[RMDB]
RNA sequence: GGGAACGACUCGAGUAGAGUCGAAAAGUUGCCGCGCAUCCGUGAAAUCGUUGCUCAGCAGCGCAGCCGCAAAGAGCAGAGUAUUACCGGCAGUGGUCAUUCGCUGGCGAUGAUGGCGGCCAGUGCAGACUGAAAUCAACUUCGGUUGAUUUCAGUCAAAAGAAACAACAACAACAAC
Reactivity to 2A3 in 0.01 (KOAc 150mM, MgCl2 10mM, bicine 150mM(pH8.5), 24C), signal-to-noise 2, nucleotides 027 to 126: g020u060u080g040c000c000g000c060g000c000a010u000c020c050g080u070g110a090a050a010u090c050g060u020u020g020c000u030c090a030g000c020a020g000c120g000c170a060g100c080c020g020c040a080a100a030g040a020g020c040a000g020a050g060u050a070u130u080a060c040c050g000g000c030a010g000u020g020g020u080c050a080u160u020c070g000c030u030g030g070c020g040a080u130g000a010u010g040g030c000g000g000c000c000a070g030u070g090c010a020
Reactivity to DMS in 0.01 (KOAc 150mM, MgCl2 10mM, bicine 150mM(pH8.5), 24C), signal-to-noise 3, nucleotides 027 to 126: g030u000u020g020c010c000g010c050g030c010a040u000c050c170g020u020g010a080a090a170u010c050g000u010u000g000c020u000c030a080g000c060a150g030c010g010c130a100g040c080c040g010c040a060a120a100g000a040g000c010a080g010a130g000u010a060u000u000a100c160c030g000g020c030a030g010u000g010g020u000c290a120u010u010c030g000c000u010g000g000c030g010a100u000g000a030u000g020g020c030g000g000c050c060a040g010u000g010c140a160
Source information: Structure probing data (2A3 and DMS) for a 177-nucleotide construct. The RNA was probed in 150 mM KOAc, 10 mM MgCl2 and 150 mM bicine (pH 8.5) at 24 C. Values cover nucleotides 27 to 126. It was measured as part of the RMDB library OK2TST. 2A3 adducts were read by reverse transcription with SuperScript II with manganese.